[RMDB]
RNA sequence: GGGAACGACUCGAGUAGAGUCGAAAAAUCAGCCUUCGUUCUGUAAACGGGGUUGGAUCCGACUCUCAUAGGCUCUCCAACCCAACUCCUACUCAAUACGUCCUCGUCGUACAUAACGGUAACAUGUAAAACGAAGGCUGCUUCGGCAGCCUUCGAACAAGACCUAAAUCUUCGGAUUUAGGUCUUGAAAAGAAACAACAACAACAAC
Reactivity to DMS in 0.01 (KOAc 150mM, MgCl2 10mM, bicine 150mM(pH8.5), 24C), signal-to-noise 1, nucleotides 027 to 156: a080u010c030a090g000c000c010u000u000c040g030u010u010c000u000g040u000a260a160a040c020g020g010g010g020u000u000g000g040a090u000c040c030g000a180c020u030c060u010c080a140u000a060g040g020c000u000c100u000c050c090a120a130c010c020c000a020a090c020u000c010c000u000a140c010u030c030a070a140u000a110c030g000u000c000c000u010c040g060u000c030g000u020a050c050a090u000a090a120c050g060g000u010a000a120c100a070u000g010u000a010a050a110a160c010g030a040a040g040g040c000u000g000c000u000u000c260g040g000c000a010g020c000c020u000u010c020g030a020a130
Reactivity to 2A3 in 0.01 (KOAc 150mM, MgCl2 10mM, bicine 150mM(pH8.5), 24C), signal-to-noise 3, nucleotides 027 to 156: a000u050c010a010g040c020c040u210u190c090g040u090u070c030u040g090u120a130a090a010c070g030g010g010g000u020u000g030g000a040u230c020c000g090a100c040u130c030u030c140a160u170a170g020g030c010u010c000u010c030c010a020a010c000c010c010a010a010c000u010c000c010u030a040c020u020c040a030a070u090a150c020g020u020c000c000u000c010g020u010c000g010u030a010c010a050u070a090a070c040g060g090u080a030a030c050a110u060g030u090a050a090a050a020c000g000a000a000g000g000c000u000g000c000u010u010c100g080g000c000a000g000c000c000u000u000c000g010a010a010

Chemical mapping of a 207-nucleotide RNA with DMS and 2A3. The DMS profile rests on 1,683 reads. 2A3 adducts were read by reverse transcription with SuperScript II with manganese. It was measured as part of the RMDB library M2RFPK. DMS adducts were read by reverse transcription with MarathonRT. In probing experiments dimethyl sulfate is read out at A N1 and C N3, which are open when not base-paired.